Conditions: 150 mM KOAc, 10 mM MgCl2 and 150 mM bicine (pH 8.5), 24 C. Structure probing data (2A3 and DMS) for a 177-nucleotide construct. Reactivities are given for positions 27 through 126. The DMS profile rests on 769 reads. DMS adducts were read by reverse transcription with MarathonRT. DMS (dimethyl sulfate) methylates the pairing face of unpaired adenines and cytosines.
RNA sequence: GGGAACGACUCGAGUAGAGUCGAAAAGACACGAGUUGCCGGAACAGACUCUCUCAACCGCCAAGUUUUGAAGGGACAAAAGUCCAAGUGCGCCUCAGCACAAAAGGCGGAACAAAACAAAAGCAAAUACAUAGAAAACUUUCGAGUUUUCUAUGUAAAAAGAAACAACAACAACAAC
Reactivity to 2A3 in 0.01 (KOAc 150mM, MgCl2 10mM, bicine 150mM(pH8.5), 24C), signal-to-noise 1, nucleotides 027 to 126: g010a000c030a010c200g030a040g080u050u030g090c070c060g050g020a060a020c060a040g050a060c020u040c010u000c000u010c020a050a100c020c010g000c010c010a000a030g030u020u040u140u220g180a110a110g080g010g000a040c020a070a300a040a020g010u000c030c000a110a000g010u030g000c010g020c000c080u180c100a030g000c070a010c010a010a030a000a010g000g000c020g010g030a030a010c060a010a100a000a000c040a000a110a040a000g040c010a010a130a000
Reactivity to DMS in 0.01 (KOAc 150mM, MgCl2 10mM, bicine 150mM(pH8.5), 24C), signal-to-noise 1, nucleotides 027 to 126: g010a120c060a040c080g010a130g000u000u000g000c080c020g030g030a020a110c080a300g010a020c020u000c010u000c010u020c030a130a180c080c010g010c000c000a120a190g010u000u000u000u000g000a200a050g000g010g010a010c020a070a060a070a180g010u000c000c010a030a070g010u010g000c010g010c120c040u000c080a110g030c020a020c110a080a050a050a070g000g010c010g000g000a090a090c080a030a070a030a070c160a020a040a100a150g000c070a100a040a100